Structure probing data (2A3 and DMS) for a 177-nucleotide construct.
The reactions ran in a buffer of 150 mM KOAc, 10 mM MgCl2 and 150 mM bicine (pH 8.5), at 24 C.
For DMS the reverse transcriptase was MarathonRT.
For 2A3 the reverse transcriptase was SuperScript II with manganese.
[RMDB]
RNA sequence: GGGAACGACUCGAGUAGAGUCGAAAAUAAACACUGUUAAAUUUUGUGACCACAUGGUCAAGGCUGGUUUAGUCGGUGUGCUCACACUAGACAACCAGGACCUUAAUGGCAAGUGGUAUGAUUUUGGCAAGAUCAGUAACUUCGGUUACUGAUCUUGAAAAGAAACAACAACAACAAC
Reactivity to 2A3 in 0.01 (KOAc 150mM, MgCl2 10mM, bicine 150mM(pH8.5), 24C), signal-to-noise 2, nucleotides 027 to 126: u150a010a080a000c050a010c080u050g060u120u080a090a100a220u060u090u100u150g060u050g040a010c010c000a010c000a060u190g020g010u000c000a010a000g020g000c000u010g010g020u060u020u060a030g010u020c000g000g020u010g000u030g010c050u110c110a010c000a000c010u050a110g000a000c000a000a000c000c000a000g020g000a030c000c000u060u100a100a070u110g000g000c000a000a040g010u010g000g020u030a070u030g090a070u040u080u040u050g060g020
Reactivity to DMS in 0.01 (KOAc 150mM, MgCl2 10mM, bicine 150mM(pH8.5), 24C), signal-to-noise 3, nucleotides 027 to 126: u000a080a060a110c090a090c080u000g000u000u010a050a120a110u000u000u000u000g010u000g010a030c000c000a020c040a070u010g020g000u000c020a020a020g010g000c000u000g020g000u000u000u010a070g020u000c000g000g010u000g010u000g010c300u010c300a080c010a010c010u000a030g020a010c020a050a010c020c000a010g000g000a070c010c000u000u000a080a130u010g010g000c020a040a040g030u000g000g000u000a060u000g000a070u000u000u000u000g000g010